[RMDB]
RNA sequence: GGGAACGACUCGAGUAGAGUCGAAAACGCUGGGACUCUUUGGUGUCACAGGUAUAGGGAGGGCACCUGACUGAAGCGCGCACGGUCAGGUGCCCGAAGAACUAUACUCACAGCACGAGUCCUGUGCUGAAGCGCGCACGGCAACCGAAAGGUGCGAGCAAGAUACACUCUUCGGAGUGUAUCUUGCAAAAGAAACAACAACAACAAC
Reactivity to 2A3 in 0.01 (KOAc 150mM, MgCl2 10mM, bicine 150mM(pH8.5), 24C), signal-to-noise 1, nucleotides 027 to 156: c080g020c060u060g010g000g000a010c000u050c040u170u260u300g230g000u070g050u160c140a180c140a080g000g040u000a000u000a020g050g020g010a000g000g000g000c000a000c000c000u000g000a000c000u000g020a070a050g010c010g000c040g000c000a010c010g010g010u040c000a010g030g000u000g000c000c000c000g000a000a000g000a000a020c010u000a000u000a040c000u120c080a110c040a020g020c000a000c020g000a010g010u000c010c010u030g040u060g030c070u100g050a180a050g040c000g000c000g000c000a000c000g030g010c020a040a110c000c010g000a090a030a000g000g000u020g020c030g020a010